[RMDB]
RNA sequence: GGGAACGACUCGAGUAGAGUCGAAAAGUGAAAUUGAUCACAAACAAACAUUACCCCUUUGUUUGACCGUGAAAAAUUUCUCCCAUCCCCUUUGUUGUCGUUAAGACAUAUGAAACCGCGCUUAUCCCUGUGAGUUACCUUUCGAGGUAACUCACAGAAAAGAAACAACAACAACAAC
Reactivity to DMS in 0.01 (KOAc 150mM, MgCl2 10mM, bicine 150mM(pH8.5), 24C), signal-to-noise 2, nucleotides 027 to 126: g060u020g000a010a000a020u000u000g000a300u000c000a010c000a060a170a300c030a000a010a000c000a040u010u000a300c040c050c020c020u000u010u000g000u010u000u000g000a120c300c300g040u000g000a000a070a070a000a000u000u000u020c000u000c030c000c000a190u010c010c000c000c030u000u000u020g010u000u000g040u000c000g020u000u030a090a160g010a060c010a030u020a040u070g000a100a010a060c050c060g010c030g010c060u000u010a110u000c010c090
Reactivity to 2A3 in 0.01 (KOAc 150mM, MgCl2 10mM, bicine 150mM(pH8.5), 24C), signal-to-noise 1, nucleotides 027 to 126: g090u040g010a000a000a010u020u040g020a020u030c000a000c010a030a120a030c000a000a000a000c000a010u010u160a190c010c030c020c000u060u000u000g020u000u000u010g060a090c060c030g020u010g000a000a000a000a060a000u030u010u010c030u020c000c010c010a040u060c010c010c000c000u010u150u060g020u000u050g000u020c070g020u020u080a060a020g030a030c020a010u130a030u110g130a120a070a000c040c020g030c010g000c090u110u050a020u090c020c020
An RNA of 177 nucleotides, treated with DMS and 2A3 and read out base by base. DMS adducts were read by reverse transcription with MarathonRT. For 2A3, 883 sequencing reads were counted. Conditions: 150 mM KOAc, 10 mM MgCl2 and 150 mM bicine (pH 8.5), 24 C. As a SHAPE reagent, 2A3 marks flexible, mostly unpaired nucleotides at the ribose 2'-OH. It was measured as part of the RMDB libraries RFM100 and RFMREP. DMS (dimethyl sulfate) methylates the pairing face of unpaired adenines and cytosines.